About this RNA: Chemical mapping of a 177-nucleotide RNA with DMS and 2A3. For 2A3, 2,081 sequencing reads were counted. The reactions ran in a buffer of 150 mM KOAc, 10 mM MgCl2 and 150 mM bicine (pH 8.5), at 24 C. Source: RMDB library OK2TRN, as collected in RNAgym. 2A3 adducts were read by reverse transcription with SuperScript II with manganese. Reactivities are given for positions 27 through 126. The DMS profile rests on 2,587 reads.
[RMDB]
RNA sequence: GGGAACGACUCGAGUAGAGUCGAAAAUGAUCGAGAGAUCUAACGAUGUACGCGAGUCAAAAGCACAGACUCGAGCGAAAGCUCGGUCGAAAGACCGCGUACAUCGGUCGGCAAGUGUACAGUCAAACGAUAGUACGCCAUUCGUGGCGUACUAUCGAAAAGAAACAACAACAACAAC
Reactivity to DMS in 0.01 (KOAc 150mM, MgCl2 10mM, bicine 150mM(pH8.5), 24C), signal-to-noise 3, nucleotides 027 to 126: u010g000a000u000c000g000a260g010a150g000a010u000c000u000a060a120c020g010a010u000g020u000a000c000g010c000g030a100g030u000c010a020a050a110a130g020c180a090c160a180g000a010c000u000c020g020a000g010c010g010a150a070a130g040c010u000c000g020g010u010c000g010a080a100a170g020a020c010c000g020c010g010u000a000c000a000u000c000g000g000u010c070g000g000c080a040a060g010u000g000u010a070c110a080g000u010c060a090a100a130
Reactivity to 2A3 in 0.01 (KOAc 150mM, MgCl2 10mM, bicine 150mM(pH8.5), 24C), signal-to-noise 2, nucleotides 027 to 126: u020g000a000u010c000g000a000g000a010g000a140u010c000u000a040a030c000g000a000u010g000u010a000c030g010c010g020a060g000u010c030a230a000a010a000g200c060a090c030a130g040a020c030u070c210g000a010g000c010g050a180a020a000g010c000u000c000g000g020u000c000g000a030a010a000g000a000c010c000g010c000g020u000a000c000a010u010c000g020g000u040c020g050g000c040a090a110g110u140g050u160a110c090a070g090u110c060a090a040a000